[RMDB]
RNA sequence: GGGAACGACUCGAGUAGAGUCGAAAAGAUAUGGAAAUACGCUGGCCUAAGACAGGCACUCGGAAACGAGUGCUCGAGGAACUACCAGGUAUUUCCUAAGUCAAAUCAAUCUGUUCGCAGAUUGAAACCAUCAGUUAACGUUCGCGUUAACUGAUGGAAAAGAAACAACAACAACAAC
Reactivity to 2A3 in 0.01 (KOAc 150mM, MgCl2 10mM, bicine 150mM(pH8.5), 24C), signal-to-noise 3, nucleotides 027 to 126: g010a000u010a010u030g000g090a020a040a000u070a030c180g060c300u020g000g050c060c160u210a220a060g120a050c030a020g050g000c010a000c010u000c000g020g020a010a020a030c000g000a000g000u010g000c020u030c030g040a090g030g050a160a140c190u140a030c200c020a000g020g000u000a000u000u000u000c000c000u020a030a000g000u010c010a030a030a300u050c000a000a000u040c000u020g100u090u110c300g000c120a000g000a030u020u010g030a080a020a030
Reactivity to DMS in 0.01 (KOAc 150mM, MgCl2 10mM, bicine 150mM(pH8.5), 24C), signal-to-noise 3, nucleotides 027 to 126: g010a030u000a130u000g000g000a010a010a000u000a000c010g030c010u000g000g010c050c080u020a080a150g040a110c250a150g000g010c010a000c000u010c000g000g000a030a030a070c000g000a020g030u000g000c010u000c030g000a080g020g010a110a070c190u000a200c000c010a010g000g000u000a000u000u000u000c000c010u000a000a040g000u000c010a130a140a150u000c000a000a010u000c000u000g010u000u020c190g010c010a010g000a030u000u000g000a020a150a230
Background: Source: RMDB library TTRDEL, as collected in RNAgym. An RNA of 177 nucleotides, treated with 2A3 and DMS and read out base by base.